The data come from the RNA Mapping Database (RMDB), library OK2TST. An RNA of 177 nucleotides, treated with 2A3 and DMS and read out base by base. Values cover nucleotides 27 to 126. For DMS the reverse transcriptase was MarathonRT. The RNA was probed in 150 mM KOAc, 10 mM MgCl2 and 150 mM bicine (pH 8.5) at 24 C.
RNA sequence: GGGAACGACUCGAGUAGAGUCGAAAAUGCCAUGCGGACGCCAUUUGUGACACGAGUCCGAUAAACGGCUCCUAUGCCUGUUCCUGUGCCACCGGCUACAAGGGCGUGGAUUGUUCAGAGGACAUAGACUCAAAGGUAAGUUCGCUUACCUUUGAGUAAAAGAAACAACAACAACAAC
Reactivity to 2A3 in 0.01 (KOAc 150mM, MgCl2 10mM, bicine 150mM(pH8.5), 24C), signal-to-noise 5, nucleotides 027 to 126: u070g010c020c010a020u120g030c040g020g020a010c070g040c060c010a080u080u120u190g110u130g070a020c000a020c160g050a050g030u020c010c010g010a020u130a020a130a010c050g010g000c000u010c010c020u070a090u140g030c000c020u040g020u070u040c010c010u010g010u030g050c010c010a110c040c070g040g000c000u060a050c040a110a100g100g010g000c040g020u020g010g010a120u110u140g070u080u070c060a040g030a060g140g010a010c010a050u100a040g090
Reactivity to DMS in 0.01 (KOAc 150mM, MgCl2 10mM, bicine 150mM(pH8.5), 24C), signal-to-noise 9, nucleotides 027 to 126: u010g020c040c020a080u010g010c050g010g000a050c090g010c050c050a090u000u000u010g030u010g010a050c080a090c170g010a120g000u000c010c010g000a110u010a030a090a120c130g000g010c030u000c030c080u000a060u010g000c050c020u000g010u000u000c040c020u000g010u000g010c030c020a050c090c140g010g020c040u010a070c120a080a090g010g000g010c030g020u000g010g000a100u000u000g000u000u000c050a060g000a150g010g000a060c050a080u000a110g000